[RMDB]
RNA sequence: GGGAACGACUCGAGUAGAGUCGAAAAACUGGGCUUGGUCGGGACGGAAGGAUUUGAACCUUCGACCACUAGCACCCCAUGCUAGUGCGCUACCAGGCUGCGCUACGCCCCGAUUGGUUAGGCAUGAGCACUGAUAAAUCUUCGGAUUUAUCAGUGCAAAAGAAACAACAACAACAAC
Reactivity to 2A3 in 0.01 (KOAc 150mM, MgCl2 10mM, bicine 150mM(pH8.5), 24C), signal-to-noise 3, nucleotides 027 to 126: a020c070u130g010g040g000c040u040u020g050g020u080c080g050g040g040a070c060g090g010a040a020g030g030a080u080u140u300g130a100a130c000c000u030u030c010g020a030c030c020a000c000u000a000g000c000a070c040c020c000c000a010u070g000c010u010a000g030u030g050c150g040c080u020a030c010c000a020g020g000c000u100g030c040g000c000u030a050c080g000c000c000c020c020g130a180u070u140g030g050u060u110a040g010g070c070a070u080g070a030
Reactivity to DMS in 0.01 (KOAc 150mM, MgCl2 10mM, bicine 150mM(pH8.5), 24C), signal-to-noise 3, nucleotides 027 to 126: a120c100u030g000g000g010c030u010u000g000g000u000c100g020g010g010a130c170g020g010a010a000g010g000a200u000u000u000g010a130a090c010c010u000u000c010g020a200c090c000a020c000u000a010g010c000a040c110c020c040c030a160u000g000c000u000a010g000u000g010c150g000c030u000a040c040c030a020g010g010c010u000g000c100g000c040u010a060c170g010c030c000c020c040g000a140u010u000g000g020u000u010a080g020g010c040a090u010g000a220
Annotation
The record gives the reactivity of an RNA of 177 nucleotides to 2A3 and DMS. The RNA was probed in 150 mM KOAc, 10 mM MgCl2 and 150 mM bicine (pH 8.5) at 24 C. For 2A3, 2,204 sequencing reads were counted.